[RMDB]
RNA sequence: GGGAACGACUCGAGUAGAGUCGAAAAGAUAUGGAGAGGUAGCCUGAUGACCCUGGGAGAACUCGGAAACGAGACCCAGGCAAGGGCGAACUCUCCUAAGUCAAAUCUUCUACUUCGGUAGAAGAAAGUGGACAUUAUAGUUCGCUAUAAUGUCCACAAAAGAAACAACAACAACAAC
Reactivity to 2A3 in 0.01 (KOAc 150mM, MgCl2 10mM, bicine 150mM(pH8.5), 24C), signal-to-noise 2, nucleotides 027 to 126: g010a030u050a030u100g000g000a000g000a010g020g030u140a010g020c010c010u110g060a240u100g020a070c020c000c000u010g000g030g000a270g050a270a230c010u000c040g010g030a080a010a020c010g000a000g090a100c020c010c010a000g020g000c000a020a100g000g000g000c010g010a010a000c010u020c000u000c000c010u000a020a000g000u010c000a010a010a120u020c010u010u010c000u010a020c000u010u060c300g100g000u000a010g000a010a010g000a020a000a020
Reactivity to DMS in 0.01 (KOAc 150mM, MgCl2 10mM, bicine 150mM(pH8.5), 24C), signal-to-noise 2, nucleotides 027 to 126: g000a000u000a270u040g010g020a020g020a020g000g030u000a300g000c000c010u000g000a050u000g030a080c300c000c010u010g000g000g020a300g000a100a130c010u010c010g000g010a030a050a070c000g000a010g040a040c000c000c000a000g000g000c020a010a020g000g020g020c010g000a080a250c000u010c000u000c000c000u000a000a080g010u000c020a090a090a060u010c030u000u000c010u010a000c000u010u020c130g000g030u000a000g000a030a000g000a010a010a090
The data come from the RNA Mapping Database (RMDB), library TTRDEL. This 177-nucleotide RNA was probed chemically with 2A3 and DMS. The DMS profile rests on 1,439 reads.